[RMDB]
RNA sequence: GGGAACGACUCGAGUAGAGUCGAAAAAUCGGUAUCUAGAUCUCUAGAAUAUCCCAAUAGGUGUUCCGGAGAAUCAGUAAAGAACACUCCACCUAUAGGAUUCUUAAUAUGAUACGCAGUGCUAACUGGCAAACAACAAGCCGCAGAGCAUAAAUUCACGAUUGGUAAACUUCGGUUUACCAAUCGUAAAAGAAACAACAACAACAAC
Reactivity to 2A3 in 0.01 (KOAc 150mM, MgCl2 10mM, bicine 150mM(pH8.5), 24C), signal-to-noise 1, nucleotides 027 to 156: a000u110c060g050g000u030a010u020c000u000a040g060a140u000c030u020c050u150a000g020a070a060u080a070u090c040c000c020a010a040u030a010g000g000u020g080u290u080c140c050g010g020a030g010a050a080u060c060a080g110u130a010a280a030g060a060a040c040a000c100u000c010c020a010c020c000u000a030u050a030g000g010a000u030u000c040u040u080a070a020u040a030u270g010a000u000a020c050g030c130a060g010u010g040c000u020a080a060c000u050g010g010c000a080a250a040c060a090a030c040a050a000g010c020c000g090c170a010g000a000g000c000a010u160a100a110a070u230u180c080